[RMDB]
RNA sequence: GGGAACGACUCGAGUAGAGUCGAAAAGAUAUGGAGGUCGAGCGAUAAGUCGGUGUCGGAAACGACACUCGACUUUUGACGCUCGACUCCUAAGUCAAACCUUGGUAGUGUUCGCACUACCAAGGAACGCAUGGUAAGUGUUCGCACUUACCAUGCGAAAAGAAACAACAACAACAAC
Reactivity to DMS in 0.01 (KOAc 150mM, MgCl2 10mM, bicine 150mM(pH8.5), 24C), signal-to-noise 1, nucleotides 027 to 126: g000a000u000a270u010g000g000a030g000g000u000c010g000a010g000c010g010a200u000a030a020g010u000c000g000g040u000g000u000c000g010g020a080a050a110c010g010a020c000a000c000u000c000g020a020c000u000u000u000u020g020a240c080g010c000u020c010g010a020c000u000c000c000u010a020a130g010u000c000a120a090a140c000c000u000u000g040g010u000a010g030u000g000u000u000c250g000c030a000c000u000a010c000c010a000a000g000g010a010a060
Reactivity to 2A3 in 0.01 (KOAc 150mM, MgCl2 10mM, bicine 150mM(pH8.5), 24C), signal-to-noise 1, nucleotides 027 to 126: g020a000u050a020u090g010g030a020g070g300u080c020g000a000g030c010g030a180u030a270a030g010u010c030g000g030u000g000u010c000g000g010a030a010a000c000g010a000c000a000c000u020c020g010a010c010u020u000u030u000g010a040c000g000c000u010c000g000a000c000u020c010c000u020a020a000g000u020c000a100a020a130c000c000u000u000g000g020u010a000g000u000g000u080u100c300g010c100a000c000u040a010c020c000a000a000g000g000a030a010